The record gives the reactivity of an RNA of 207 nucleotides to 2A3 and DMS. For DMS, 3,540 sequencing reads were counted.

RNA sequence: GGGAACGACUCGAGUAGAGUCGAAAAACAUUUCAUGUCUUUCAAGCGGGAAAAUGCUUGGUCGAGCCAAAGAACUUAAAUAGUUAGUUUGUGGCCAUGGUUUGAAUGCUUCACUGAUUAAAUAGACAGAUUGCUAUUGAGUUAGAGCGGGUAAAACUAGCCCUAUUAACUUCGGUUAAUAGGGCUAAAAAGAAACAACAACAACAAC
Reactivity to 2A3 in 0.01 (KOAc 150mM, MgCl2 10mM, bicine 150mM(pH8.5), 24C), signal-to-noise 2, nucleotides 027 to 156: a000c080a050u060u100u070c050a050u160g020u000c000u000u110u090c020a050a000g000c020g020g040g120a000a170a040a080u170g010c010u040u010g010g010u020c050g020a000g060c030c000a030a040a070g020a050a010c000u020u150a030a100a150u060a180g020u010u020a030g020u020u030u070g090u040g010g000c000c000a060u040g000g020u060u050u100g110a100a030u020g040c030u050u150c030a020c050u020g010a020u160u080a060a090a040u040a040g030a020c010a020g130a080u020u120g000c000u030a040u180u070g020a030g000u100u030a000g000a000g040c070g010g060g000u020a030a030a030a030c040
Reactivity to DMS in 0.01 (KOAc 150mM, MgCl2 10mM, bicine 150mM(pH8.5), 24C), signal-to-noise 2, nucleotides 027 to 156: a050c020a060u000u010u010c060a190u010g020u010c010u000u000u000c040a080a090g010c040g000g010g130a100a100a060a040u000g000c020u000u000g020g010u000c030g010a100g050c020c020a030a070a110g010a050a030c070u020u010a040a060a120u000a170g010u010u000a040g020u000u010u000g020u010g020g020c000c020a140u000g010g040u000u000u000g000a100a150u000g010c060u000u010c030a140c060u000g030a080u000u000a040a070a070u000a030g010a110c080a120g000a190u010u000g030c010u000a070u000u000g000a140g010u000u000a060g000a050g000c040g000g020g000u000a020a040a070a130c090

About this RNA:
DMS (dimethyl sulfate) methylates the pairing face of unpaired adenines and cytosines.